[RMDB]
RNA sequence: GGGAACGACUCGAGUAGAGUCGAAAAGGAGCACUUAUCUGGCUACGCGUGUUGGACGCACUUAUCUCGCUACGCGCGCUGAACCCACGAGGGAGUGCCGCCCCCCCUCAGGAUGGCAAAAAACACCGUGACUGCGGGGAUUCGUCCCCGCAGUCACAAAAGAAACAACAACAACAAC
Reactivity to 2A3 in 0.01 (KOAc 150mM, MgCl2 10mM, bicine 150mM(pH8.5), 24C), signal-to-noise 2, nucleotides 027 to 126: g060g020a250g010c020a000c000u000u000a020u040c000u000g000g000c010u080a040c000g040c000g020u000g020u040u300g000g010a090c010g000c090a000c080u140u290a290u300c050u060c090g000c000u100a110c010g040c000g050c000g000c120u090g000a060a000c010c020c020a000c110g000a050g080g300g040a000g060u030g000c020c010g000c010c000c000c020c000c000c000u060c000a020g050g050a040u030g000g090c090a010a070a000a130a130a000c110a080c150c010